Record summary: Conditions: 150 mM KOAc, 10 mM MgCl2 and 150 mM bicine (pH 8.5), 24 C. Structure probing data (2A3) for a 207-nucleotide construct. Source: RMDB library RNAMAK, as collected in RNAgym.
RNA sequence: GGGAACGACUCGAGUAGAGUCGAAAAGCGUACUACAGCUUUUGACGCGAGGCGGAUGAGGCGAUAAGAUCUUUCCCAAAUAGGAAAGAUCUUUUGACGCCUCAUGCCAUCGCGAUAAGCUGUAUCGCAAAGUAUUCAACCUUCGGGUUGAAUACAAGCCAUCUUCUACGUUCGCGUAGAAGAUGGCAAAAGAAACAACAACAACAAC
Reactivity to 2A3 in 0.01 (KOAc 150mM, MgCl2 10mM, bicine 150mM(pH8.5), 24C), signal-to-noise 2, nucleotides 027 to 156: g000c020g100u150a130c040u020a010c030a000g020c010u070u080u060u070g160a130c000g000c000g000a000g040g000c040g040g150a070u010g000a020g030g000c040g010a040u050a060a000g000a000u000c010u020u050u020c040c030c010a120a300a130u300a110g010g000a030a000a000g000a000u010c000u050u020u020u020g020a010c000g000c000c000u000c000a000u000g000c000c000a170u010c010g000c000g030a020u010a010a000g000c000u010g000u000a000u110c000g000c000a040a040a040g000u000a000u000u010c000a000a000c000c000u000u110c230g100g000g000u000u020g010a000a000u000a000c000a000a000